[RMDB]
RNA sequence: GGGAACGACUCGAGUAGAGUCGAAAAGGAUUCGUGCCAGUGCUGGACCUAGCAGGCGCGUCUAUCGUAAACGGCUGGAUAGACGCGAGCGCCCUAUAGCGGCUAUAGGCUCGCGGGGUCCAGCCAAGGAUUUUCUCACAUUCGUGUGAGGAAGUCCAAAAGAAACAACAACAACAAC
Reactivity to 2A3 in 0.01 (KOAc 150mM, MgCl2 10mM, bicine 150mM(pH8.5), 24C), signal-to-noise 5, nucleotides 027 to 126: g060g010a050u020u040c020g000u040g030c010c010a040g030u030g040c000u000g000g060a090c000c030u020a000g000c010a010g050g000c000g000c000g010u000c010u010a070u030c010g050u060a020a020a070c040g050g000c030u000g050g000a000u000a010g110a020c000g000c000g000a010g000c040g010c000c010c010u060a060u030a040g080c120g030g000c010u010a010u020a040g040g000c010u010c060g000c000g000g000g000g000u000c000c000a000g000c000c010a000a010
Reactivity to DMS in 0.01 (KOAc 150mM, MgCl2 10mM, bicine 150mM(pH8.5), 24C), signal-to-noise 8, nucleotides 027 to 126: g000g000a050u010u010c020g010u010g010c020c040a090g000u020g020c010u000g010g010a100c130c070u010a100g030c030a170g000g010c010g010c000g000u000c020u000a030u000c030g020u030a070a080a120c150g000g010c030u000g010g000a010u000a050g010a190c000g010c000g000a020g010c060g010c230c040c010u010a060u010a060g000c180g020g000c030u010a060u020a050g030g000c020u010c030g000c010g000g000g000g000u000c000c000a000g000c000c030a030a010